[RMDB]
RNA sequence: GGGAACGACUCGAGUAGAGUCGAAAAGGACAUUCGUGUCCGAUCCGUCCUAAGUCGGUAUAAGAUGGCGUUUGACGCAUCGCAGAGUCGGAAACGACGACGAAGCGAUGCCGAGCCAUUGAUGUACCGAUAUGGAACACCGCACCUUCGGGUGCAAGGCAGCAAAUUGAUUCGUCAAUUUGCUGCCAAAAGAAACAACAACAACAAC
Reactivity to 2A3 in 0.01 (KOAc 150mM, MgCl2 10mM, bicine 150mM(pH8.5), 24C), signal-to-noise 3, nucleotides 027 to 156: g000g000a000c000a000u070u180c250g130u040g020u060c000c000g000a050u030c030c010g030u000c000c000u040a120a020g020u010c000g000g000u000a010u050a020a040g010a010u010g000g000c120g060u080u140u300g050a080c020g010c010a000u020c010g120c000a040g000a000g070u010c000g010g150a280a190a180c110g240a030c000g000a010c000g000a090a010g030c010g030a010u000g000c010c000g000a000g000c000c050a000u000u010g030a050u300g000u000a000c000c000g000a000u010a010u020g000g000a030a030c020a050c050c080g000c010a000c020c010u100u120c260g110g000g020u010g000c000a020a050